The record gives the reactivity of an RNA of 207 nucleotides to 2A3. The RNA was probed in 150 mM KOAc, 10 mM MgCl2 and 150 mM bicine (pH 8.5) at 24 C. It was measured as part of the RMDB library OK3TST. 2A3 adducts were read by reverse transcription with SuperScript II with manganese. The 2A3 profile rests on 486 reads.

RNA sequence: GGGAACGACUCGAGUAGAGUCGAAAAACAACAGAUAGCUGGAACCAGCGUAGAAUUCUACGCAUAUCCAUAGCGAAUGGUACCUGUAAAGAAAAUAAUGAGUAAUGUACAAGUACCAACAGUGCUCAAUGCCAUGGUGAUGUCAAUCACAUAUGCAUCAUCCUGGACGUUUCGACGUCCAGGAUGAAAAAGAAACAACAACAACAAC
Reactivity to 2A3 in 0.01 (KOAc 150mM, MgCl2 10mM, bicine 150mM(pH8.5), 24C), signal-to-noise 2, nucleotides 027 to 156: a000c040a000a000c010a010g220a190u190a070g040c070u010g010g020a030a100c110c000a000g030c000g010u000a000g030a010a300u250u300c000u000a000c010g070c010a000u000a010u030c000c010a020u060a010g000c050g060a070a060u050g000g040u000a010c000c000u010g010u020a110a180a010g150a210a030a000a010u270a040a050u160g040a000g190u140a040a160u160g010u000a020c000a010a000g000u000a000c000c000a030a030c020a070g130u100g070c000u040c020a020a100u010g000c000c000a010u040g010g020u040g000a010u010g160u260c100a120a040u010c000a030c010a000u250a000u060g000c030a000